[RMDB]
RNA sequence: GGGAACGACUCGAGUAGAGUCGAAAACGGAUCUUCGACGACGACCCGAUCGAGGCCAAGUACAUCAACACCCCCGCCACGCCGGUCUUCAACAAGUCGCAGGUGCUGUUCGGCAUCGAUCUGGCGAAACGCGAGAUAGCCAAGCGCCACCAGACGGUACUAGUGCAAUGUUCGCAUUGCACUAGUAAAAAGAAACAACAACAACAAC
Reactivity to 2A3 in 0.01 (KOAc 150mM, MgCl2 10mM, bicine 150mM(pH8.5), 24C), signal-to-noise 3, nucleotides 027 to 156: c020g040g030a010u010c000u140u080c120g040a060c030g020a040c010g210a220c040c030c000g030a100u050c000g030a020g090g000c020c010a120a020g140u100a180c050a150u160c140a140a130c020a120c090c000c030c020c000g000c000c010a020c010g150c140c030g000g050u090c000u150u040c060a170a120c000a050a080g020u050c020g070c060a070g020g000u020g040c050u010g060u060u090c060g040g020c000a010u040c020g030a030u010c010u040g070g030c020g020a210a060a010c090g000c000g000a020g000a040u030a030g040c000c000a020a000g000c010g000c020c020a010c060c000a000g060a050c020g000g000
Reactivity to DMS in 0.01 (KOAc 150mM, MgCl2 10mM, bicine 150mM(pH8.5), 24C), signal-to-noise 2, nucleotides 027 to 156: c060g000g000a080u000c030u000u000c070g040a140c030g040a180c040g000a100c040c010c010g010a120u010c050g010a040g040g010c000c010a020a120g000u000a100c040a120u010c030a050a100c070a150c010c000c010c000c010g010c040c020a070c050g000c060c000g020g000u000c040u000u000c070a060a130c120a110a110g030u000c030g040c050a120g040g040u000g090c010u000g020u050u010c060g000g040c040a060u000c030g000a050u000c000u000g050g020c020g020a020a030a060c010g030c070g000a070g010a080u000a110g000c050c020a040a130g020c040g020c000c000a020c010c010a070g000a150c060g020g010